[RMDB]
RNA sequence: GGGAACGACUCGAGUAGAGUCGAAAAGCCGCGACGGUCAGCGCGUGGGCGGUGCCCACGUUGAAGGCGAAGGCGUCCGCGAGGUCCUUGGUCGAGGUGCUUAGCAGCGUGUUGGGCAUGGUGCCGCAAAUAGGCGUGAAUUCGUUCACGCCUAUUUAAAAGAAACAACAACAACAAC
Reactivity to DMS in 0.01 (KOAc 150mM, MgCl2 10mM, bicine 150mM(pH8.5), 24C), signal-to-noise 5, nucleotides 027 to 126: g010c050c020g020c060g010a080c080g020g020u000c030a100g020c080g020c010g030u000g020g010g020c010g010g010u020g010c010c000c010a010c020g030u000u010g020a100a090g010g000c020g010a100a120g020g000c060g020u000c030c040g010c060g010a080g010g010u000c030c020u000u020g020g000u000c030g010a080g010g010u000g000c040u000u000a100g010c070a060g010c070g000u010g010u010u000g010g000g010c030a080u000g010g010u010g010c020c030g020c130
Reactivity to 2A3 in 0.01 (KOAc 150mM, MgCl2 10mM, bicine 150mM(pH8.5), 24C), signal-to-noise 2, nucleotides 027 to 126: g040c000c000g000c040g040a030c030g060g040u090c040a000g000c000g010c020g050u050g030g040g000c170g160g120u270g020c000c020c000a020c010g020u030u130g140a090a040g060g000c060g030a070a010g040g040c050g000u000c050c020g040c000g020a040g020g010u000c000c020u050u070g030g000u040c060g040a050g050g000u010g040c020u050u080a010g010c030a030g030c030g020u080g070u130u130g010g010g000c010a040u030g110g000u100g060c020c020g060c060